[RMDB]
RNA sequence: GGGAACGACUCGAGUAGAGUCGAAAAUUCAAGCGAUUCGUCGCUUGAACCUGAGGAGACUCAAGCAAAAUUGUUCCCUAUUGCUUUUGCUUUCCUCUUUUAAGUAGUAGUGCUUCGGCACUACUAAACGAGUUACAGUAUUCGUACUGUAACUCGUAAAAGAAACAACAACAACAAC
Reactivity to 2A3 in 0.01 (KOAc 150mM, MgCl2 10mM, bicine 150mM(pH8.5), 24C), signal-to-noise 3, nucleotides 027 to 126: u010u000c000a000a010g000c010g020a010u030u120c220g050u010c000g150c000u000u000g000a000a010c000c010u010g000a000g000g020a010g010a010c000u000c010a010a000g000c000a010a040a110a150u180u300g000u010u020c000c000c000u010a030u020u020g000c000u030u030u000u010g020c030u020u000u010c020c000u020c030u110u080u030u080a090a020g010u020a000g000u010a000g000u010g010c000u030u050c230g060g020c000a000c000u010a000c000u000a000a000
Reactivity to DMS in 0.01 (KOAc 150mM, MgCl2 10mM, bicine 150mM(pH8.5), 24C), signal-to-noise 4, nucleotides 027 to 126: u010u000c000a000a000g000c010g010a030u000u010c170g010u000c000g010c000u000u000g000a000a050c020c020u000g000a020g000g010a030g000a020c010u000c040a010a000g010c000a010a010a020a170u000u010g010u000u000c000c000c000u000a300u000u000g010c010u000u000u000u010g000c160u000u000u000c000c000u000c000u010u010u000u010a090a110g000u000a000g020u000a000g010u000g000c000u000u010c180g020g010c000a000c000u000a000c000u000a010a050

The record gives the reactivity of an RNA of 177 nucleotides to 2A3 and DMS. The DMS profile rests on 7,026 reads. High DMS reactivity at an A or C suggests that its Watson-Crick edge is free. 2A3 adducts were read by reverse transcription with SuperScript II with manganese. Conditions: 150 mM KOAc, 10 mM MgCl2 and 150 mM bicine (pH 8.5), 24 C. Source: RMDB library M2PK50, as collected in RNAgym.